RNA sequence: GGGAACGACUCGAGUAGAGUCGAAAACAUAUACCAUGUAACCUCAUGUUAAACCAUAAAUACUUACCAAUACCUCUUACAGUGUGACAGGACACAAACUAUUAAACCUGAUGCAGAUAAUGCCUUUUAAAAUGAGUAUUAUAUUUGAUUAUUAUUAGUGCUACUAUGGUUUCGACCAUAGUAGCACAAAAGAAACAACAACAACAAC
Reactivity to 2A3 in 0.01 (KOAc 150mM, MgCl2 10mM, bicine 150mM(pH8.5), 24C), signal-to-noise 1, nucleotides 027 to 156: c000a000u110a000u050a020c060c000a020u030g090u060a040a070c000c020u000c000a020u050g030u020u140a100a190a120c060c060a000u130a080a050a050u050a110c050u080u210a050c010c030a050a070u060a060c000c000u030c020u030u030a000c030a020g020u000g000u000g080a050c000a100g070g140a000c020a010c000a060a160a000c050u220a000u300u080a060a040a040c000c000u010g000a000u120g110c000a000g000a120u050a100a020u030g070c000c000u140u140u170u190a000a130a160a060u150g000a020g000u040a040u010u110a160u050a080u080u050u090g020a020u100u270a040u290u030a090u050u210a300
The data come from the RNA Mapping Database (RMDB), library OK3TST. An RNA of 207 nucleotides, treated with 2A3 and read out base by base. The reactions ran in a buffer of 150 mM KOAc, 10 mM MgCl2 and 150 mM bicine (pH 8.5), at 24 C. Values cover nucleotides 27 to 156.